[RMDB]
RNA sequence: GGGAACGACUCGAGUAGAGUCGAAAAGCAUAGCGUCAAGUUGGUUGACCAGAAGUCUGGUUAGCAAACAGAGUAAAACCAAAAGGUUAGACGCACUCUGUGAAAAAGUACGAUAGUACAAAGAUAAUCAAUGAAGUCUAUUCGUAGACUUCAUUGAAAAAGAAACAACAACAACAAC
Reactivity to 2A3 in 0.01 (KOAc 150mM, MgCl2 10mM, bicine 150mM(pH8.5), 24C), signal-to-noise 3, nucleotides 027 to 126: g050c020a070u090a110g000c010g030u020c090a110a090g050u070u070g100g020u000u000g040a000c000c000a000g040a300a030g160u120c010u010g000g000u010u000a000g000c010a080a010a010c010a000g070a020g090u100a000a200a030a030c030c010a170a250a080a070g000g030u040u030a050g000a000c020g010c000a010c010u000c010u030g060u020g080a160a060a040a000a000g010u020a000c010g050a210u120a130g000u000a010c020a010a070a000g090a100u180a140a070
Reactivity to DMS in 0.01 (KOAc 150mM, MgCl2 10mM, bicine 150mM(pH8.5), 24C), signal-to-noise 5, nucleotides 027 to 126: g010c090a100u010a080g010c010g030u000c010a110a140g010u000u000g010g030u000u000g010a010c010c010a010g000a300a170g030u010c010u000g000g020u000u000a020g030c030a050a060a010c010a060g000a070g010u000a070a060a050a050c010c000a070a090a090a120g010g010u000u010a070g000a030c040g010c050a110c040u000c020u000g000u010g000a060a060a080a080a070g000u010a020c000g010a120u010a120g020u010a020c020a050a070a090g000a100u000a050a110
Chemical mapping of a 177-nucleotide RNA with 2A3 and DMS. For DMS the reverse transcriptase was MarathonRT. For 2A3 the reverse transcriptase was SuperScript II with manganese.